[RMDB]
RNA sequence: GGGAACGACUCGAGUAGAGUCGAAAACCAGCGUCAGAAGGUGACCCGUGAUGGAGGCGGCCGGGAUAGCACAUAUCGAGUCGGAUAAUUGUGCAAGUUGAUCGCUUCGGCGGUUUAAUUUGGCGGUGCCAUCAGGAUUUACUCGCACAUUGUGGCCCCUCUUUUAUAUGUUCGCAUAUAAAAGAGGAAAAGAAACAACAACAACAAC
Reactivity to DMS in 0.01 (KOAc 150mM, MgCl2 10mM, bicine 150mM(pH8.5), 24C), signal-to-noise 1, nucleotides 027 to 156: c020c020a170g000c090g000u000c020a090g010a100a110g020g010u010g010a050c000c000c000g010u010g020a110u010g000g000a110g010g010c010g000g000c020c030g000g070g010a100u000a070g010c020a020c020a120u010a060u010c020g010a150g040u020c070g000g030a100u000a050a110u000u000g030u000g030c020a050a070g020u000u000g000a030u010c020g020c010u010u000c300g020g010c030g000g020u000u000u000a050a080u000u000u010g030g030c020g030g050u000g010c000c010a010u010c020a150g020g010a100u000u010u000a080c020u000c010g000c020a050c100a160u010u000g010u000g020g000c030c050
Reactivity to 2A3 in 0.01 (KOAc 150mM, MgCl2 10mM, bicine 150mM(pH8.5), 24C), signal-to-noise 3, nucleotides 027 to 156: c020c010a010g080c030g080u080c050a070g030a160a040g090g050u080g010a070c000c000c030g140u070g030a020u040g020g050a070g070g130c100g030g000c000c020g060g050g000a070u140a090g000c020a020c010a030u050a030u030c050g060a040g250u120c080g060g030a030u060a090a080u110u070g000u010g020c000a030a000g000u030u060g050a010u000c000g000c000u050u040c150g070g000c000g000g060u050u060u190a040a040u060u080u110g030g020c090g010g030u040g010c010c020a020u010c010a010g030g010a020u070u180u130a050c050u070c040g030c000a020c020a050u010u080g070u040g050g010c000c000